This 177-nucleotide RNA was probed chemically with 2A3 and DMS. Values cover nucleotides 27 to 126. For DMS, 1,295 sequencing reads were counted. For 2A3 the reverse transcriptase was SuperScript II with manganese. Reactivities are rounded to 0.1 and cut off at 0 and 3. For 2A3, 3,392 sequencing reads were counted. The reactions ran in a buffer of 150 mM KOAc, 10 mM MgCl2 and 150 mM bicine (pH 8.5), at 24 C. DMS adducts were read by reverse transcription with MarathonRT.
RNA sequence: GGGAACGACUCGAGUAGAGUCGAAAAGAGCCGUGGAUAAAAUAUGUCGCAACCGCAAAGGCAAGCAAUGCACCGAUCAUGCUGAAAAAAACACGAGGUGCAUACAUGGUGCUCUCCUCCCGAGAACCGUCUAAGAUUAGUUCGCUAAUCUUAGACGAAAAGAAACAACAACAACAAC
Reactivity to 2A3 in 0.01 (KOAc 150mM, MgCl2 10mM, bicine 150mM(pH8.5), 24C), signal-to-noise 3, nucleotides 027 to 126: g020a010g000c030c010g000u030g010g030a050u130a190a220a110a030u180a140u150g060u050c030g000c070a050a090c110c030g020c150a160a100a070g010g000c030a030a000g070c010a040a030u000g000c000a010c000c000g050a090u110c020a030u080g000c020u050g060a120a080a010a000a000a030a020c040a000c020g000a010g000g020u000g020c010a000u000a010c000a010u090g120g020u100g000c000u010c000u000c010c010u000c000c000c000g020a060g010a050a050c030
Reactivity to DMS in 0.01 (KOAc 150mM, MgCl2 10mM, bicine 150mM(pH8.5), 24C), signal-to-noise 2, nucleotides 027 to 126: g000a040g020c010c030g000u000g030g020a110u050a040a000a220a190u000a110u010g000u000c020g000c150a280a070c080c050g020c200a070a120a170g010g000c020a090a140g020c070a060a030u000g000c010a010c000c000g010a140u000c060a040u000g000c100u010g000a000a000a100a030a050a120a050c020a000c040g010a100g000g000u000g000c000a020u000a000c040a020u000g020g050u000g030c020u020c030u000c080c100u030c020c010c000g010a120g000a110a150c210